Chemical mapping of a 177-nucleotide RNA with DMS. Reactivities are given for positions 27 through 126. The DMS profile rests on 1,054 reads.

[RMDB]
RNA sequence: GGGAACGACUCGAGUAGAGUCGAAAAAUAACUAAUUAAAAAGAAGGGAGACAGAUGAGGAUGUGACUCAGAGGUAAAGAUCUAUGCCAUACGGGGGGCUCUGGGUUCAGUGUGGCUCUUGUGGGAAAUCAUAAUCACUCUUCGGAGUGAUUAUGAUAAAAGAAACAACAACAACAAC
Reactivity to DMS in 0.01 (KOAc 150mM, MgCl2 10mM, bicine 150mM(pH8.5), 24C), signal-to-noise 1, nucleotides 027 to 126: a080u000a040a160c020u020a090a100u060u020a060a050a060a100a070g010a130a080g020g000g010a070g020a080c120a030g010a050u030g000a050g010g000a090u000g020u000g000a040c080u000c050a010g020a040g020g000u000a060a010a070g000a100u000c070u010a070u000g000c070c070a070u010a050c140g020g010g000g000g000g010c030u030c070u000g000g000g000u000u010c040a040g030u000g030u000g000g000c050u010c050u020u020g050u000g010g030g010a050a080